[RMDB]
RNA sequence: GGGAACGACUCGAGUAGAGUCGAAAAAAUUUGUAAUUCAAAGACAACAACUGUCUGACCCCUUCCCCAUUGAGGCAGAUGGUUGGCAAGGACAAGCCUGUCCAGGUUGAAAUGGGUCCAGAGUGGAUAAACUUCCAUAAUUCGUUAUGGAAGUUUAAAAAGAAACAACAACAACAAC
Reactivity to DMS in 0.01 (KOAc 150mM, MgCl2 10mM, bicine 150mM(pH8.5), 24C), signal-to-noise 9, nucleotides 027 to 126: a070a040u000u000u000g000u000a100a080u010u000c110a080a080a090g010a080c070a060a080c030a010a020c020u010g010u000c000u000g000a180c010c010c010c030u000u000c050c000c010c070a070u000u000g010a300g000g000c010a010g000a020u000g000g010u000u000g000g010c190a100a050g000g000a030c040a060a100g010c070c040u000g010u000c020c030a130g000g000u010u000g000a050a040a040u010g010g010g010u000c040c030a100g000a070g010u000g000g010a150
Reactivity to 2A3 in 0.01 (KOAc 150mM, MgCl2 10mM, bicine 150mM(pH8.5), 24C), signal-to-noise 3, nucleotides 027 to 126: a000a000u180u170u080g060u110a160a240u280u150c080a160a090a040g090a050c010a060a010c000a000a020c050u000g030u020c030u070g300a300c000c010c000c040u020u030c000c020c000c000a020u020u040g020a030g030g000c000a000g000a020u010g040g000u020u010g020g050c060a070a100g000g000a010c000a030a060g120c010c030u010g000u040c020c010a000g040g080u080u070g000a000a020a040u020g020g000g030u000c010c010a060g020a020g300u200g050g020a030